[RMDB]
RNA sequence: GGGAACGACUCGAGUAGAGUCGAAAAGAGACGUUGUUCGCAACGUCUCGCAAUAUGCGGCGCUCGCGCCCCGCACUGAGAUCGUCGGGAUCCAGACCGACAACACCCAAGAAUUCGUUCUUGGGAACGACAGAUACAAAUUCGUUUGUAUCUGUCGAAAAGAAACAACAACAACAAC
Reactivity to 2A3 in 0.01 (KOAc 150mM, MgCl2 10mM, bicine 150mM(pH8.5), 24C), signal-to-noise 2, nucleotides 027 to 126: g010a000g000a000c010g000u010u020g020u050u100c220g010c110a000a000c000g000u000c000u000c000g000c000a060a110u170a060u190g000c010g000g000c020g010c040u070c090g080c040g010c060c040c000c010g030c010a050c090u190g090a060g050a270u160c090g030u000c000g010g020g010a020u020c030c010a030g080a080c000c010g030a000c010a020a030c050a050c010c000c000a000a000g000a010a020u110u120c190g060u080u000c030u000u000g010g010g000a010a000
Reactivity to DMS in 0.01 (KOAc 150mM, MgCl2 10mM, bicine 150mM(pH8.5), 24C), signal-to-noise 9, nucleotides 027 to 126: g000a000g010a010c000g020u000u000g010u000u020c200g020c010a010a000c010g000u000c000u000c000g010c140a070a100u010a100u000g000c010g010g020c300g010c020u000c300g000c250g000c010c090c000c010g010c020a030c110u000g000a150g000a090u010c130g000u000c020g000g000g000a070u000c030c050a120g000a090c000c000g000a020c020a090a080c280a140c000c000c000a000a010g000a020a030u000u000c190g010u000u000c000u000u000g010g000g000a010a040